Chemical mapping of a 207-nucleotide RNA with 2A3.
It was measured as part of the RMDB library RNAMAK.
Values cover nucleotides 27 to 156.
[RMDB]
RNA sequence: GGGAACGACUCGAGUAGAGUCGAAAAGGGGUCUGCAGAGCGAACCCUAGAAGCUUGGAUUUAUAUACUGAAGCCUCCACGGUAUAUUGUCAGCUUCUAUGUGCUUCGCUCGCAGACGGAGGCACCCAAAACAGGGUUACGUUCGCGUAACCCUGAAGAUAUGCGUGCUGUUCGCAGCACGCAUAUCAAAAGAAACAACAACAACAAC
Reactivity to 2A3 in 0.01 (KOAc 150mM, MgCl2 10mM, bicine 150mM(pH8.5), 24C), signal-to-noise 1, nucleotides 027 to 156: g100g000g020g010u000c000u000g000c020a100g010a030g010c000g000a010a010c000c000c030u000a020g020a000a000g080c220u300u300g190g000a100u300u300u000a050u030a000u000a010c000u010g060a100a050g010c030c020u000c000c010a010c020g000g020u010a010u020a000u010u030g030u010c060a040g000c010u000u000c000u000a040u090g120u140g040c220u040u030c000g000c000u010c010g050c000a000g000a000c010g010g040a010g020g000c020a060c020c000c020a040a080a000a000c010a010g030g010g010u000u000a010c010g030u080u020c250g000c000g070u010a010a020c000c000c000u000g010a010a000